[RMDB]
The record gives the reactivity of an RNA of 177 nucleotides to 2A3 and DMS.
The RNA was probed in 150 mM KOAc, 10 mM MgCl2 and 150 mM bicine (pH 8.5) at 24 C.
For DMS the reverse transcriptase was MarathonRT.

RNA sequence: GGGAACGACUCGAGUAGAGUCGAAAAGAUAUGGAUCCCUACACAGCUUGGACCGUGUAUCGGAAACGAUACACGCUAGCUGGUAGUGGAUCCUAAGUCAAAACACGGUCACUUCGGUGACCGUGAACUAAGCUGAAUACUUCGGUAUUCAGCUUAGAAAAGAAACAACAACAACAAC
Reactivity to 2A3 in 0.01 (KOAc 150mM, MgCl2 10mM, bicine 150mM(pH8.5), 24C), signal-to-noise 5, nucleotides 027 to 126: g010a010u040a000u070g000g010a010u020c020c020c010u010a010c300a000c000a010g070c060u300u300g040g000a050c020c030g010u000g000u000a000u000c000g020g000a010a010a020c000g000a000u010a010c000a000c010g000c000u000a000g000c000u000g020g000u000a010g010u180g030g000a000u000c000c000u000a000a010g000u000c010a010a010a120a130c010a000c010g000g010u000c000a010c020u060u160c300g150g000u000g000a000c000c000g000u000g020a000a000
Reactivity to DMS in 0.01 (KOAc 150mM, MgCl2 10mM, bicine 150mM(pH8.5), 24C), signal-to-noise 5, nucleotides 027 to 126: g010a010u000a100u010g000g000a010u000c000c010c010u000a010c000a140c030a010g030c010u010u020g020g010a020c300c000g000u000g000u000a000u000c000g010g000a030a010a030c000g010a010u000a000c000a010c000g000c000u000a010g020c000u000g010g020u010a020g000u010g020g010a010u000c000c000u000a000a060g000u010c010a130a090a130a280c010a010c000g000g000u000c000a010c000u000u020c210g020g010u000g000a010c000c000g020u000g000a030a130

The DMS profile rests on 8,291 reads.